[RMDB]
RNA sequence: GGGAACGACUCGAGUAGAGUCGAAAACAUUCCGAGGGGACCGUCCCCUCGGUAAUGGCGAAUGGGACCCACAAACCUCUCUAGAUUCCGAUAGAGAAUCGAGAGGAAAGUGGCUCUCCCUUAGCCACGUUAGACUAAACUUCGGUUUAGUCUAACGAAAAGAAACAACAACAACAAC
Reactivity to DMS in 0.01 (KOAc 150mM, MgCl2 10mM, bicine 150mM(pH8.5), 24C), signal-to-noise 3, nucleotides 027 to 126: c070a140u010u000c000c010g010a010g020g010g020g010a280c300c300g000u000c000c000c000c000u000c000g000g000u000a020a080u000g030g000c020g010a180a090u010g000g010g020a010c200c000c000a000c010a010a160a220c010c000u000c000u000c000u010a190g000a010u000u000c000c010g000a190u010a090g010a150g000a030a000u000c000g000a000g020a050g010g000a000a040a080g010u000g000g010c010u000c110u000c000c000c000u000u010a230g000c010c020a110
Reactivity to 2A3 in 0.01 (KOAc 150mM, MgCl2 10mM, bicine 150mM(pH8.5), 24C), signal-to-noise 3, nucleotides 027 to 126: c010a040u070u060c000c000g000a000g000g030g020g000a080c060c060g300u230c010c000c000c000u000c000g000g000u000a000a040u050g000g010c000g020a030a020u030g000g010g010a010c020c070c000a010c010a030a180a030c000c000u030c000u000c030u070a080g000a010u000u000c010c010g160a230u130a210g200a030g000a060a000u010c000g000a000g000a010g000g000a070a020a000g000u000g010g000c010u020c000u000c000c000c000u000u010a010g000c010c000a010